[RMDB]
RNA sequence: GGGAACGACUCGAGUAGAGUCGAAAAGAUAUGGACUGUGCUUCUUUGAUCUCACUUCGGAAACGAAGUGAGGGGAGAAGAUACAGUCCUAAGUCAAAACAACAACUGAGUUCGCUCAGUUGUUGAAGUAGCGUUAAUUCUUCGGAAUUAACGCUACAAAAGAAACAACAACAACAAC
Reactivity to 2A3 in 0.01 (KOAc 150mM, MgCl2 10mM, bicine 150mM(pH8.5), 24C), signal-to-noise 3, nucleotides 027 to 126: g010a010u050a050u130g010g000a000c010u010g000u010g010c010u040u000c000u090u250u200g300a300u080c000u000c000a000c000u010u000c000g010g030a070a060a040c000g000a000a010g000u000g010a000g010g000g040g030a120g020a010a010g030a060u070a030c000a000g000u010c000c000u000a000a000g000u000c010a010a020a080a130c000a000a000c010a000a000c010u000g020a010g050u070u150c250g100c100u000c000a000g010u000u000g000u010u010g000a010a000
Reactivity to DMS in 0.01 (KOAc 150mM, MgCl2 10mM, bicine 150mM(pH8.5), 24C), signal-to-noise 2, nucleotides 027 to 126: g010a040u000a300u000g000g000a010c000u000g000u000g020c010u000u000c000u000u000u000g000a090u030c000u000c000a000c000u000u010c000g000g000a120a090a180c010g020a020a000g000u000g000a010g000g000g000g000a000g000a000a000g020a070u000a010c010a000g000u000c000c000u000a000a070g000u010c030a090a080a170a210c010a010a010c000a000a010c000u000g010a020g000u000u010c260g010c000u000c000a010g010u000u000g000u000u000g000a030a140
Chemical mapping of a 177-nucleotide RNA with 2A3 and DMS.
The RNA was probed in 150 mM KOAc, 10 mM MgCl2 and 150 mM bicine (pH 8.5) at 24 C.
High 2A3 reactivity points to a flexible backbone, as in loops and unpaired stretches.
The 2A3 profile rests on 6,796 reads.
2A3 adducts were read by reverse transcription with SuperScript II with manganese.
Values cover nucleotides 27 to 126.